[RMDB]
RNA sequence: GGGAACGACUCGAGUAGAGUCGAAAAUCAUAGCUUCACCAGCGCGACCUGGUCCUCCACGAGCUGGCCCGCGGCCGCGAGCUCAGCUUUAACCUUCCCGCCCACCUCCUCGCGCAGGUACACCGAAUUACUAGGUACUCUUCGGAGUACCUAGUAAAAAAGAAACAACAACAACAAC
Reactivity to DMS in 0.01 (KOAc 150mM, MgCl2 10mM, bicine 150mM(pH8.5), 24C), signal-to-noise 3, nucleotides 027 to 126: u010c090a110u010a090g010c050u000u000c100a120c050c040a050g000c030g020c030g000a070c080c030u020g000g010u000c030c020u000c030c040a110c150g010a050g010c020u000g000g000c000c000c010g000c040g010g030c190c150g020c020g000a030g000c020u010c020a010g000c030u000u010u010a070a080c130c080u000u000c020c000c000g000c060c030c030a070c070c020u010c020c010u000c020g010c070g020c030a050g020g020u000a090c110a130c040c040g010a090a110
The record gives the reactivity of an RNA of 177 nucleotides to DMS. It was measured as part of the RMDB library M2PK90. Reactivities are given for positions 27 through 126. The reactions ran in a buffer of 150 mM KOAc, 10 mM MgCl2 and 150 mM bicine (pH 8.5), at 24 C. For DMS, 2,139 sequencing reads were counted.